Conditions: 150 mM KOAc, 10 mM MgCl2 and 150 mM bicine (pH 8.5), 24 C. This 207-nucleotide RNA was probed chemically with 2A3 and DMS. The data come from the RNA Mapping Database (RMDB), library M2RFPK. For DMS the reverse transcriptase was MarathonRT. High 2A3 reactivity points to a flexible backbone, as in loops and unpaired stretches.
RNA sequence: GGGAACGACUCGAGUAGAGUCGAAAAGUUGUGUAACUUCAUUUAAAUGAAUUGAAACAAAUUUAAGACAAGUGGAUGUAGGAUAACCGUCCGUCCUUUACAUUGGUAUAAAAGUGAUCUAAAAUUCGGCAGGGACGAGUCUUCGGACUCGUCCCAAGAUAUGAAGUCGUUUCGACGACUUCAUAUCAAAAGAAACAACAACAACAAC
Reactivity to 2A3 in 0.01 (KOAc 150mM, MgCl2 10mM, bicine 150mM(pH8.5), 24C), signal-to-noise 1, nucleotides 027 to 156: g050u020u060g010u000g080u070a070a090c030u070u000c040a160u170u090u170a130a210a090u160g010a040a020u050u030g020a050a070a000c040a000a090a000u100u160u170a060a020g060a090c030a130a060g020u030g080g070a000u040g020u110a000g000g050a020u050a090a030c030c000g020u040c040c050g010u010c040c000u080u040u040a020c040a070u050u080g080g000u070a000u040a090a080a000a000g050u070g070a020u070c010u080a140a000a170a170u080u150c010g070g000c080a070g000g020g010a000c000g000a000g010u030c000u000u110c160g000g000a000c000u000c000g000u000c000c000c000a000a000
Reactivity to DMS in 0.01 (KOAc 150mM, MgCl2 10mM, bicine 150mM(pH8.5), 24C), signal-to-noise 1, nucleotides 027 to 156: g010u000u000g000u000g010u000a180a130c100u000u000c030a030u010u000u010a080a090a160u040g000a070a090u000u010g000a150a140a270c040a040a060a090u000u000u000a100a110g020a110c040a080a110g020u000g010g000a070u020g030u000a050g020g030a090u000a060a050c080c050g000u000c030c050g020u000c000c020u000u010u000a030c020a160u000u000g030g030u000a100u000a010a070a050a140g030u000g010a070u010c050u010a050a040a050a220u000u000c050g050g010c100a080g000g070g030a030c010g010a010g040u000c010u010u000c300g020g010a010c000u000c020g000u000c000c010c060a000a020